RNA sequence: GGGAACGACUCGAGUAGAGUCGAAAAAGCAGAGGCGCUCCUCGACUUUGCCAAGCGUUUUGAGAUCAUUCGAAAGGCCGAAAUUUCGAGUCUAAGCCUCUCAGAGGUGGACUUUGCGGAUGAGGAGGCGUAUAGUUAGCUUCGGCUAACUAUACGCAAAAGAAACAACAACAACAAC
Reactivity to DMS in 0.01 (KOAc 150mM, MgCl2 10mM, bicine 150mM(pH8.5), 24C), signal-to-noise 2, nucleotides 027 to 126: a110g020c020a030g010a060g010g050c090g020c010u000c030c030u000c010g030a070c020u010u020u000g010c010c060a130a140g000c030g000u010u000u000u000g000a030g020a200u000c230a170u000u010c000g010a010a030a030g030g010c030c030g010a050a090a150u000u000u000c060g000a030g000u000c010u000a080a230g010c040c020u000c000u010c200a100g000a030g020g060u000g000g010a000c110u000u000u010g040c120g000g000a090u010g000a030g020g010a050g010
Reactivity to 2A3 in 0.01 (KOAc 150mM, MgCl2 10mM, bicine 150mM(pH8.5), 24C), signal-to-noise 1, nucleotides 027 to 126: a000g050c040a040g010a020g060g070c100g050c050u050c000c020u020c000g010a020c030u010u010u070g020c020c010a030a030g030c100g070u040u020u020u020g080a110g010a080u210c120a150u000u180c020g050a030a020a030g060g000c000c020g070a090a090a030u130u110u010c070g000a000g000u000c030u100a100a010g020c000c020u000c000u010c040a080g000a020g000g000u080g090g000a030c030u010u100u160g070c050g070g080a070u080g000a050g000g070a010g050

Source: RMDB library OK2TST, as collected in RNAgym. Chemical mapping of a 177-nucleotide RNA with DMS and 2A3. The RNA was probed in 150 mM KOAc, 10 mM MgCl2 and 150 mM bicine (pH 8.5) at 24 C. For 2A3, 839 sequencing reads were counted.